[RMDB]
RNA sequence: GGGAACGACUCGAGUAGAGUCGAAAAACAUCUCCCAAGAAGAAGCGGGAACAAUCUCAAGAAGAGGAGGAUUCCCCGAGACGCUGACGGAAACCCCGGGAACAAGGAAACAGGAGGAGGAUCGGUAGAUAUGUUUCUUGUUCGCAAGAAACAUAUCAAAAGAAACAACAACAACAAC
Reactivity to 2A3 in 0.01 (KOAc 150mM, MgCl2 10mM, bicine 150mM(pH8.5), 24C), signal-to-noise 2, nucleotides 027 to 126: a000c040a150u080c020u000c030c010c010a020a000g070a040a010g040a070a000g040c120g000g010g030a020a030c020a030a100u010c010u030c070a060a130g090a070a020g030a110g050g000a000g000g030a070u020u060c020c010c000c000g020a030g020a000c050g000c070u050g010a010c010g020g020a070a050a030c000c010c000c040g000g000g000a030a020c030a060a030g020g020a030a040a010c030a020g010g050a000g030g000a020g020g000a020u080c020g030g030u010a010
Reactivity to DMS in 0.01 (KOAc 150mM, MgCl2 10mM, bicine 150mM(pH8.5), 24C), signal-to-noise 3, nucleotides 027 to 126: a070c160a140u010c130u010c000c000c020a150a100g000a100a090g010a080a070g020c150g020g000g000a060a050c090a110a100u000c030u000c020a110a110g010a090a100g010a060g010g010a010g010g000a180u000u010c030c010c010c030g010a070g000a120c170g000c060u000g010a060c080g000g010a070a080a130c050c020c020c020g000g020g010a040a060c110a060a080g000g000a020a060a050c070a060g010g010a080g010g010a040g010g000a040u000c050g000g020u010a120